RNA sequence: GGGAACGACUCGAGUAGAGUCGAAAAGAGUUCGGUUGGAGCGACAAGUAUUUAGCUUGAGAUAGCUAAAUCACCUCGGUAUGAUUAGGGUGAGACCUAGGAACCGUAGGGGGAUUCUCAAAGGAAGGUUACCGAACAACCUUCGGGUUGUUCGGAAGAUACAGCAUUUCUUCGGAAAUGCUGUAUCAAAAGAAACAACAACAACAAC
Reactivity to DMS in 0.01 (KOAc 150mM, MgCl2 10mM, bicine 150mM(pH8.5), 24C), signal-to-noise 2, nucleotides 027 to 156: g020a140g000u000u000c040g020g030u000u000g000g020a080g010c040g010a080c040a040a090g020u010a040u010u000u000a000g010c010u010u000g010a280g000a140u010a020g000c010u010a000a030a020u000c040a020c010c010u010c050g010g020u000a070u000g010a240u010u000a030g010g020g000u000g000a220g020a140c030c020u010a060g010g000a080a060c020c020g020u000a040g020g000g060g040g010a120u010u000c030u000c050a070a060a120g000g000a050a060g010g000u000u000a200c010c000g000a040a040c000a010a010c000c010u000u010c300g040g000g040u000u000g020u000u010c000g010g000a010a020
Reactivity to 2A3 in 0.01 (KOAc 150mM, MgCl2 10mM, bicine 150mM(pH8.5), 24C), signal-to-noise 4, nucleotides 027 to 156: g070a000g020u080u090c050g020g040u030u060g050g020a030g020c030g040a040c030a080a030g060u080a070u020u030u000a000g000c000u020u030g020a020g010a100u160a030g000c000u000a000a000a020u030c010a060c010c000u030c030g030g000u160a110u200g080a140u100u140a050g020g050g000u040g080a080g010a020c010c010u020a030g020g040a030a030c030c030g050u140a060g000g010g000g010g030a030u200u030c040u020c030a090a090a010g050g010a030a020g020g000u080u130a040c000c000g000a000a000c000a000a000c000c000u040u040c060g040g020g000u000u000g000u010u000c000g000g000a000a000